RNA sequence: GGGAACGACUCGAGUAGAGUCGAAAAUAAAAUUAUCUAAGUCUAAGACCUUGUUUCAAACUAACAAGGGCGCAUGGAGGAAGGUUGAACCUCCAUACUUAGACAAGCGCGAACCGGCCAUAAAAAAUCAUAUUUAACAGUUCGCUGUUAAAUAUGAAAAAGAAACAACAACAACAAC
Reactivity to DMS in 0.01 (KOAc 150mM, MgCl2 10mM, bicine 150mM(pH8.5), 24C), signal-to-noise 2, nucleotides 027 to 126: u010a070a060a150a080u010u000a020u000c020u000a050a090g010u000c060u000a060a020g010a160c000c000u000u000g000u000u000u000c140a060a120a190c240u020a010a000c000a010a010g000g000g000c170g030c180a020u000g000g010a010g010g000a110a090g010g030u010u000g010a200a030c010c010u010c000c000a010u000a030c010u000u000a000g010a000c020a040a070g020c070g000c010g010a080a060c030c030g010g000c030c040a050u020a000a010a110a060a080a120
Reactivity to 2A3 in 0.01 (KOAc 150mM, MgCl2 10mM, bicine 150mM(pH8.5), 24C), signal-to-noise 1, nucleotides 027 to 126: u140a000a030a000a050u130u150a060u040c030u030a140a070g030u000c000u010a020a000g010a050c010c000u010u000g060u020u110u120c240a200a190a080c020u100a020a000c010a000a000g000g000g060c040g020c010a000u010g000g000a000g020g030a130a030g100g020u100u070g050a050a050c000c000u000c020c000a000u000a010c030u000u000a010g000a020c050a000a030g040c050g000c010g120a050a000c010c030g070g000c030c030a120u300a020a120a000a000a000a060
Record summary
This 177-nucleotide RNA was probed chemically with DMS and 2A3. Conditions: 150 mM KOAc, 10 mM MgCl2 and 150 mM bicine (pH 8.5), 24 C. DMS adducts were read by reverse transcription with MarathonRT. 2A3 adducts were read by reverse transcription with SuperScript II with manganese.